This 177-nucleotide RNA was probed chemically with 2A3 and DMS. The 2A3 profile rests on 1,864 reads. The reactions ran in a buffer of 150 mM KOAc, 10 mM MgCl2 and 150 mM bicine (pH 8.5), at 24 C.
[RMDB]
RNA sequence: GGGAACGACUCGAGUAGAGUCGAAAAGAUAUGGAUUAAGCAGGCAACAGCCCAUUGGUCGGAAACGACCAUGGGACAUGCCUGUAUCCUAAGUCAAAACAUCACGUAGGUUCGCCUACGUGAUGAACAGAAACGUACCGUUCGCGGUACGUUUCUGAAAAGAAACAACAACAACAAC
Reactivity to 2A3 in 0.01 (KOAc 150mM, MgCl2 10mM, bicine 150mM(pH8.5), 24C), signal-to-noise 1, nucleotides 027 to 126: g040a020u060a060u150g000g020a000u120u210a220a080g080c010a000g030g000c010a120a060c050a300g090c020c010c030a020u130u300g020g000u000c000g000g000a000a080a050c000g020a000c000c010a000u010g000g060g000a040c030a020u060g000c000c030u030g000u010a000u000c000c000u010a180a000g020u000c020a080a040a050a120c010a010u000c010a000c000g010u020a000g050g030u090u110c210g100c100c000u000a020c000g010u010g010a000u000g000a000a000
Reactivity to DMS in 0.01 (KOAc 150mM, MgCl2 10mM, bicine 150mM(pH8.5), 24C), signal-to-noise 2, nucleotides 027 to 126: g010a010u000a300u010g000g010a030u000u000a060a110g010c020a000g000g000c010a010a110c250a200g030c000c000c010a000u000u040g040g020u000c000g030g000a110a090a080c000g020a000c000c000a000u000g000g010g000a010c160a060u000g010c000c040u020g030u000a000u000c000c000u000a020a140g000u010c020a150a060a150a250c010a000u000c000a000c000g010u000a000g010g020u000u010c290g020c000c000u000a000c010g000u010g000a000u000g000a060a130
2A3 adducts were read by reverse transcription with SuperScript II with manganese.